[RMDB]
RNA sequence: GGGAACGACUCGAGUAGAGUCGAAAACAGGGAGGCGCUUACCUGAGAAAGGAGCCCCGGGGCACUCUUCUCAGAAUCCAGCGAGAGGCGUGGAGAGAGGGCCGCGGUGCUCUGGAGUAGAGGCUCUGUUUAAAGCAAUGUUCGCAUUGCUUUAAACAAAAGAAACAACAACAACAAC
Reactivity to DMS in 0.01 (KOAc 150mM, MgCl2 10mM, bicine 150mM(pH8.5), 24C), signal-to-noise 1, nucleotides 027 to 126: c040a100g010g010g010a140g020g020c020g020c030u020u000a040c050c050u010g000a190g010a070a160a230g010g010a030g030c020c110c010c030g020g010g010g000c030a030c010u010c000u000u010c000u020c000a120g000a230a130u000c010c020a070g010c140g000a160g010a060g010g010c210g020u030g010g010a010g010a060g010a020g020g020g000c000c020g000c030g010g000u000g010c010u010c010u000g010g000a180g030u000a060g000a090g020g010c040u010c050u010